[RMDB]
RNA sequence: GGGAACGACUCGAGUAGAGUCGAAAAAAGAUGAAGCACUAAUCAUUCCAAUGAAUAAUAGCAUAUCUGUUACAUUAGAAAAAUUUUACACUGAAACGAAAGUCACUUUUAACGACCAGUUAACACAACUAGGUAUCCAGUUCGCUGGAUACCUAGUAAAAGAAACAACAACAACAAC
Reactivity to DMS in 0.01 (KOAc 150mM, MgCl2 10mM, bicine 150mM(pH8.5), 24C), signal-to-noise 2, nucleotides 027 to 126: a080a020g000a060u010g000a060a100g040c100a080c050u010a040a050u000c030a020u020u040c020c030a070a040u000g000a080a070u000a000a030u020a090g000c030a030u050a010u000c050u010g000u000u000a090c090a050u010u040a070g030a010a090a040a050a080u050u000u060u020a160c120a080c100u000g010a020a040a040c160g020a120a070a050g010u000c050a000c060u030u000u010u010a080a130c120g020a110c010c010a060g000u000u000a030a010c160a040c140a050
Reactivity to 2A3 in 0.01 (KOAc 150mM, MgCl2 10mM, bicine 150mM(pH8.5), 24C), signal-to-noise 4, nucleotides 027 to 126: a000a050g060a000u030g030a070a020g090c070a030c230u130a130a020u040c030a090u060u020c050c000a090a020u110g070a100a090u110a100a030u050a060g010c010a020u060a100u240c070u050g040u050u080a010c060a140u080u190a100g140a070a070a020a030a090u080u050u120u150a040c080a000c050u130g080a120a150a000c050g040a190a020a030g060u070c040a090c110u040u190u050u210a060a000c030g030a000c010c000a060g000u060u110a140a030c090a000c000a160
The record gives the reactivity of an RNA of 177 nucleotides to DMS and 2A3. For 2A3 the reverse transcriptase was SuperScript II with manganese. Reactivities are rounded to 0.1 and cut off at 0 and 3. The RNA was probed in 150 mM KOAc, 10 mM MgCl2 and 150 mM bicine (pH 8.5) at 24 C.